[RMDB]
RNA sequence: GGGAACGACUCGAGUAGAGUCGAAAAUUGGAGGAAAAAACCAAUCCUGGACCUCAGAUAGUUUGAGAAAUAUUGUGCUUGAGAGUUACUUUCAUCUUGCUCUUCUCCCAGAUCAAAACUUAUGCAGCAGGAACAAUUCAGAAAAAGACAAACCAGAUCCUUUUACGCUAUUCGUAGCGUAAAAGGAAAAAGAAACAACAACAACAAC
Reactivity to DMS in 0.01 (KOAc 150mM, MgCl2 10mM, bicine 150mM(pH8.5), 24C), signal-to-noise 1, nucleotides 027 to 156: u010u010g000g030a110g020g040a000a040a080a160a030a040c030c030a030a080u010c030c010u000g040g000a170c030c000u000c040a070g000a180u030a040g020u000u020u020g000a100g020a140a170a140u000a060u000u000g030u000g010c090u010u030g020a150g010a140g030u000u000a100c040u000u010u000c030a090u010c060u000u000g010c020u030c040u000u000c040u000c010c000c020a120g000a180u000c120a080a050a020a060c080u000u000a030u020g010c040a050g060c000a050g030g000a050a070c050a040a090u010u000c050a120g000a050a010a110a050a130g030a050c040a050a050a030c060c010a110g020a200
Reactivity to 2A3 in 0.01 (KOAc 150mM, MgCl2 10mM, bicine 150mM(pH8.5), 24C), signal-to-noise 2, nucleotides 027 to 156: u070u000g060g020a020g000g090a080a020a000a030a000a090c000c020a010a020u100c010c000u030g010g010a020c000c000u010c010a000g020a070u110a030g060u090u060u070g000a040g000a000a140a070u250a020u080u120g020u070g100c010u040u020g020a010g000a010g050u090u140a100c020u030u100u090c070a130u010c000u040u060g010c020u040c000u050u010c040u040c000c000c000a010g010a140u110c070a010a080a110a210c030u040u020a020u120g010c000a020g000c000a010g030g020a010a080c020a070a070u110u130c030a030g200a060a150a030a020a000g100a020c140a050a080a070c000c080a030g000a090